Chemical mapping of a 177-nucleotide RNA with DMS and 2A3. For 2A3, 2,413 sequencing reads were counted. The DMS profile rests on 2,910 reads. It was measured as part of the RMDB library OK1LIB. Reactivities are given for positions 27 through 126. DMS (dimethyl sulfate) methylates the pairing face of unpaired adenines and cytosines. For 2A3 the reverse transcriptase was SuperScript II with manganese.
[RMDB]
RNA sequence: GGGAACGACUCGAGUAGAGUCGAAAACGCGCGUGUGCACGCAUCGCGCGCUGCGCUAGAUAGAUGCGCUAGAAUCGUGAAGGCUAGAUAGCUUGAUGCGUGGCGUCGCUAGAACGAUCACGAAAAAGGGAUUAACUUACUUCGGUAAGUUAAUCCCAAAAGAAACAACAACAACAAC
Reactivity to DMS in 0.01 (KOAc 150mM, MgCl2 10mM, bicine 150mM(pH8.5), 24C), signal-to-noise 2, nucleotides 027 to 126: c130g020c040g020c070g020u030g000u000g020c050a020c000g000c000a020u000c040g000c000g030c120g010c000u020g000c050g010c000u010a230g020a260u010a070g020a150u010g000c040g010c020u090a180g000a100a130u000c000g000u000g020a060a140g010g020c000u000a070g000a150u010a040g020c000u010u000g010a080u000g000c000g010u000g000g010c010g010u000c000g040c240u000a080g000a050a010c070g000a040u000c020a050c030g020a050a170a010a160a150
Reactivity to 2A3 in 0.01 (KOAc 150mM, MgCl2 10mM, bicine 150mM(pH8.5), 24C), signal-to-noise 4, nucleotides 027 to 126: c090g010c000g000c000g000u030g000u120g080c020a000c040g030c000a010u020c000g010c000g000c010g000c000u010g000c030g000c010u030a030g080a220u110a060g190a050u140g070c020g000c050u030a050g100a150a160u110c010g000u000g080a040a010g020g040c010u030a030g060a280u260a080g160c040u030u070g020a020u020g040c000g000u020g000g050c010g010u090c010g020c220u070a040g020a010a050c020g020a040u030c000a000c030g050a070a070a110a010a050
The RNA was probed in 150 mM KOAc, 10 mM MgCl2 and 150 mM bicine (pH 8.5) at 24 C.